[RMDB]
This 170-nucleotide RNA was probed chemically with 2A3 and DMS. The DMS profile rests on 24,136 reads. Reactivities are rounded to 0.1 and cut off at 0 and 3. It was measured as part of the RMDB library 15KLIB. Reactivities are given for positions 27 through 129.
RNA sequence: GGGAACGACUCGAGUAGAGUCGAAAAAUAGACCUGUGUGUAGUUUUCCACUUUGCGCUAAUGGUCUUGUAUUCGGCUUAUACAAGAAUAUGUGCACAGGUAGUCCUUCUAUAGUUGAAUUUAAUAGUCAGGUUUAAGUUCGCUUAAACCAAAAGAAACAACAACAACAAC
Reactivity to 2A3 in 0.01 (KOAc 150mM, MgCl2 10mM, bicine 150mM(pH8.5), 24C), signal-to-noise 9, nucleotides 027 to 129: a000u110a020g110a010c000c000u000g000u000g000u000g010u030a140g040u030u050u050u020c010c010a040c020u040u060u080g050c050g000c020u070a070a050u090g060g000u000c000u010u000g020u010a030u020u070c070g060g010c060u080u080a040u010a070c010a020a010g020a050a020u120a050u170g090u050g000c010a000c010a010g000g000u010a020g040u010c010c000u050u110c080u070a120u070a100g060u030u120g010a080a090u100u100u090a140a140u100a040g090u050c110a040
Reactivity to DMS in 0.01 (KOAc 150mM, MgCl2 10mM, bicine 150mM(pH8.5), 24C), signal-to-noise 6, nucleotides 027 to 129: a110u030a080g030a070c000c000u020g020u040g060u030g000u060a100g030u050u000u040u010c040c040a060c070u030u030u050g030c000g030c030u060a090a040u050g000g020u020c000u000u000g030u030a000u000u060c080g000g000c090u000u000a080u020a050c030a040a060g030a030a030u020a040u050g040u040g000c000a050c020a050g040g000u030a000g050u030c050c020u010u020c180u070a140u050a090g030u000u000g030a050a040u040u010u030a060a060u030a080g000u040c160a140
For DMS the reverse transcriptase was MarathonRT.